[RMDB]
RNA sequence: GGGAACGACUCGAGUAGAGUCGAAAACGCUGGGUCCCACAGCGAGGGGAGCUUCCUGAAGCGCGCACGGGAAGCAUCGAUCUCCGCUGUUGGGACCUGUGCUGAAGCGCGCACGGCAACCGAAAGGUGCGAGGGGCGUCGUCUUCGGACGACGCAAGACGUAAACGUGGUUCGCCACGUUUACGUCAAAAGAAACAACAACAACAAC
Reactivity to 2A3 in 0.01 (KOAc 150mM, MgCl2 10mM, bicine 150mM(pH8.5), 24C), signal-to-noise 1, nucleotides 027 to 156: c020g010c040u070g000g010g000u010c000c000c000a000c000a000g020c040g110a300g020g120g000g020a060g010c010u000u000c000c000u040g020a190a130g050c010g000c000g000c010a020c000g020g000g000a040a010g090c010a090u300c170g070a170u090c050u000c030c000g010c010u020g160u300u080g000g000g000a000c000c010u000g000u000g010c040u000g010a130a030g010c010g000c000g000c000a010c000g030g030c000a020a030c030c000g030a130a070a000g030g000u030g030c030g010a160g030g150g030g000c000g000u000c000g000u010c000u040u010c180g070g000a000c000g000a000c000g000c000a000a010
The data come from the RNA Mapping Database (RMDB), library RNAMAK. An RNA of 207 nucleotides, treated with 2A3 and read out base by base. For 2A3, 1,269 sequencing reads were counted. The reactions ran in a buffer of 150 mM KOAc, 10 mM MgCl2 and 150 mM bicine (pH 8.5), at 24 C.